The record gives the reactivity of an RNA of 177 nucleotides to 2A3.
The data come from the RNA Mapping Database (RMDB), library OK1LIB.
For 2A3, 504 sequencing reads were counted.

RNA sequence: GGGAACGACUCGAGUAGAGUCGAAAACGAAAUACAGUGAGUGGACGGAACAAAUCCCCUUCCCACCUCCCCACUGUCCACUCACUGUCUUCCUAAGAGGAAAUAUAAAUCGGGGGUGGGAAGGGGAAUCAGCGCACGGAUUCGUCCGUGCGCUGAUAAAAGAAACAACAACAACAAC
Reactivity to 2A3 in 0.01 (KOAc 150mM, MgCl2 10mM, bicine 150mM(pH8.5), 24C), signal-to-noise 1, nucleotides 027 to 126: c080g090a080a060a040u260a060c000a000g000u000g000a000g030u000g000g000a000c000g000g080a020a000c000a000a130a100u170c000c000c000c070u000u010c010c010c000a000c000c000u000c060c180c070c010a040c010u010g010u000c000c020a000c000u000c000a000c000u000g000u030c000u050u010c000c030u040a250a110g070a090g260g260a040a020a070u300a010u160a000a100a150u110c130g000g000g000g000g000u050g000g000g010a000a020g000g000g000g000a000